[RMDB]
RNA sequence: GGGAACGACUCGAGUAGAGUCGAAAAUUCGUCAAGCUCGAUGACUUCGAGCUUGGUAGCGCGGACAAUGGCAGUCGUCUCCUUCUUGACAGGGUCUGCAAGCCGCGGGGGUGAGACGGGUGGUACAACGAAAUUCGAGAUUCGUCUCGAAUUUCGUAAAAGAAACAACAACAACAAC
Reactivity to 2A3 in 0.01 (KOAc 150mM, MgCl2 10mM, bicine 150mM(pH8.5), 24C), signal-to-noise 1, nucleotides 027 to 126: u170u070c000g070u110c000a010a000g000c000u030c000g020a060u090g050a030c130u140u000c010g000a000g000c000u010u000g000g000u080a080g050c040g000c030g020g030a090c050a050a300u110g100g000c060a040g070u060c040g170u090c030u080c010c000u060u080c060u160u130g050a100c120a160g000g010g100u080c010u000g060c080a090a080g010c000c040g010c010g020g000g000g010g050u060g000a070g010a040c070g000g000g050u010g030g000u120a120c060a060
Reactivity to DMS in 0.01 (KOAc 150mM, MgCl2 10mM, bicine 150mM(pH8.5), 24C), signal-to-noise 2, nucleotides 027 to 126: u020u000c110g000u000c010a000a000g000c000u000c010g000a000u000g020a110c300u020u020c000g020a030g030c000u000u000g000g020u010a050g000c150g030c040g000g000a100c060a080a040u010g000g000c020a110g010u010c080g020u000c030u000c050c050u000u010c170u020u020g000a140c220a130g020g000g000u020c030u020g050c100a130a230g030c060c000g000c040g020g000g000g000g020u030g010a040g010a050c020g000g010g020u000g000g010u000a050c100a170